[RMDB]
Conditions: 150 mM KOAc, 10 mM MgCl2 and 150 mM bicine (pH 8.5), 24 C. This 177-nucleotide RNA was probed chemically with DMS and 2A3. It was measured as part of the RMDB library OK2TST.
RNA sequence: GGGAACGACUCGAGUAGAGUCGAAAACAGGACGUAGAGAAUCGCUGGGUCCGAGAACUCUCUGAGGAAGAGACCACGCUCGUCAACACGCGGCUGGCUGACGCCGAGCGGAUGAUUCGUCGCCGGAAGUACAUACGUCAUUCGUGACGUAUGUACUAAAAGAAACAACAACAACAAC
Reactivity to DMS in 0.01 (KOAc 150mM, MgCl2 10mM, bicine 150mM(pH8.5), 24C), signal-to-noise 8, nucleotides 027 to 126: c100a150g010g020a040c030g020u000a050g010a140g010a070a060u010c070g010c040u010g020g000g010u000c040c020g010a130g000a080a140c120u000c010u000c050u010g010a130g000g010a160a050g000a080g000a100c060c060a100c120g010c020u010c030g010u000c070a050a090c130a080c170g010c040g010g000c050u010g000g000c030u010g010a100c130g000c200c030g000a040g010c010g000g000a090u010g000a090u000u000c020g010u000c060g010c010c010g000g010a090
Reactivity to 2A3 in 0.01 (KOAc 150mM, MgCl2 10mM, bicine 150mM(pH8.5), 24C), signal-to-noise 5, nucleotides 027 to 126: c030a010g000g090a010c070g130u080a030g040a010g050a230a090u090c040g020c050u050g060g010g020u000c020c030g020a050g020a070a040c000u030c000u000c050u130g050a060g090g120a080a040g040a010g010a020c000c020a040c040g020c010u090c050g080u070c050a060a050c020a020c160g040c010g080g000c060u060g040g000c020u060g020a010c030g060c050c010g000a020g000c000g050g020a050u100g010a020u060u110c040g050u050c010g060c030c000g020g020a030

2A3 is a SHAPE reagent: it acylates the 2'-hydroxyl of flexible nucleotides of all four kinds.
The DMS profile rests on 11,811 reads.